[RMDB]
RNA sequence: GGGAACGACUCGAGUAGAGUCGAAAAGACGGAAAAGAUCGAACCUAAGAAGAUCAGGAAGUGUGAGCCGAAUCCUAGGGCCCCUAGGGACGCAUCGUCCGAUGCGAAAUAAACACUAACGUCGAAAACUCAGCGAUGGAUUCGUCCAUCGCUGAGUAAAAGAAACAACAACAACAAC
Reactivity to DMS in 0.01 (KOAc 150mM, MgCl2 10mM, bicine 150mM(pH8.5), 24C), signal-to-noise 2, nucleotides 027 to 126: g000a050c000g010g030a040a060a000a150g000a040u010c020g030a110a180c100c050u010a260a120g000a100a120g000a000u010c020a190g030g050a030a060g020u000g000u000g000a150g020c140c090g010a070a080u120c000c000u000a020g000g000g000c060c070c070c000u040a040g000g010g000a130c050g000c000a030u000c000g020u040c160c150g000a000u000g020c000g000a000a090a140u030a100a010a020c040a050c010u000a140a070c050g020u000c030g000a060a060a070
Reactivity to 2A3 in 0.01 (KOAc 150mM, MgCl2 10mM, bicine 150mM(pH8.5), 24C), signal-to-noise 2, nucleotides 027 to 126: g010a050c030g000g060a000a010a040a070g000a000u040c000g020a120a060c060c000u040a140a010g080a020a030g020a150u020c030a000g050g290a170a000g010u000g000u010g050a000g040c040c030g180a010a040u000c000c000u000a000g020g140g080c000c090c060c000u000a010g000g010g000a070c000g000c000a000u000c000g300u070c170c040g000a000u050g000c000g020a060a040a050u090a040a050a000c000a000c080u090a220a040c010g000u000c000g030a000a020a020

Notes
This 177-nucleotide RNA was probed chemically with DMS and 2A3. Source: RMDB library OK1LIB, as collected in RNAgym.